[RMDB]
RNA sequence: GGGAACGACUCGAGUAGAGUCGAAAAUUAAAUGCUGCUGCAGGACCAAUCGUUAUGAUCUUACCAACUAAAUUAUCAGCAGUUUGGUUUGCACCACAAGAACGUACACUAUCCACUGCGAUUGCAACGUGGGAACGCAUUUCGAUGCGUUCCCACGAAAAGAAACAACAACAACAAC
Reactivity to 2A3 in 0.01 (KOAc 150mM, MgCl2 10mM, bicine 150mM(pH8.5), 24C), signal-to-noise 2, nucleotides 027 to 126: u010u000a030a070a000u200g020c020u000g070c080u000g000c020a060g000g110a010c000c000a020a000u030c030g090u080u080a100u170g010a030u030c070u000u040a070c100c020a050a020c040u150a080a080a300u170u120a090u110c060a030g070c060a060g000u010u020u020g000g000u000u000u040g020c050a070c040c000a020c040a000a110g000a130a000c020g020u100a020c080a050c010u000a040u090c000c000a080c000u030g000c040g160a160u040u150g000c000a010a010

Source information
The data come from the RNA Mapping Database (RMDB), library OK1LIB. Structure probing data (2A3) for a 177-nucleotide construct. The reactions ran in a buffer of 150 mM KOAc, 10 mM MgCl2 and 150 mM bicine (pH 8.5), at 24 C. For 2A3, 698 sequencing reads were counted. 2A3 adducts were read by reverse transcription with SuperScript II with manganese.